[RMDB]
RNA sequence: GGGAACGACUCGAGUAGAGUCGAAAAGGGGUCAAGGGAGAGCGAACGUGAGGGAGCAUCGAUCUAUACUGAAGCCUCCACGGUAUAGGGAGCUCCCUCUCGCUCGAAGAACUUGACGGAGGCACCCAAAAUCGUAUCCAGUUCGCUGGAUACGAAAGUAGUGUUACCGUUUCGACGGUAACACUACAAAAGAAACAACAACAACAAC
Reactivity to 2A3 in 0.01 (KOAc 150mM, MgCl2 10mM, bicine 150mM(pH8.5), 24C), signal-to-noise 2, nucleotides 027 to 156: g000g000g060g030u010c010a000a010g030g000g010a030g000a000g040c010g030a090a110c220g180u060g010a000g000g010g000a000g000c000a040u300c010g010a000u000c010u000a000u010a000c000u030g060a100a030g020c010c000u000c000c000a000c000g010g010u000a000u000a010g010g010g010a020g000c000u000c000c050c000u000c000u000c010g000c000u000c010g080a110a010g000a000a000c000u010u010g000a020c010g000g010a000g000g000c010a020c010c000c010a060a050a010a130u020c000g000u000a010u000c020c000a010g020u080u090c170g130c120u000g000g010a000u000a000c000g010a010a000a000